Chemical mapping of a 177-nucleotide RNA with 2A3. It was measured as part of the RMDB library M2PK50. Reactivities are given for positions 27 through 126.
RNA sequence: GGGAACGACUCGAGUAGAGUCGAAAAACCUGAUGAUUCGUCAUCAGGUCACAUGCCGCCCGAACGGCUUCCUGACCGGGCGGAUUCAGUUUAAAUGGAGCACUGCUGCAUCAUUCGUGAUGCAGAAGAGGGCAAAGUACUUCGGUACUUUGCCCUCAAAAGAAACAACAACAACAAC
Reactivity to 2A3 in 0.01 (KOAc 150mM, MgCl2 10mM, bicine 150mM(pH8.5), 24C), signal-to-noise 1, nucleotides 027 to 126: a000c010c000u000g000a000u000g000a000u000u180c250g090u020c080a010u010c010a000g010g000u000c010a070c000a020u130g050c010c000g000c040c000c000g000a050a030c130g070g100c000u150u060c000c020u010g010a000c050c000g060g020g000c020g020g000a010u080u070c010a070g150u010u050u270a100a160a090u070g010g010a010g010c010a000c100u090g000c000u000g010c010a010u000c000a000u000u060c100g090u040g030a000u000g050c000a010g010a000a010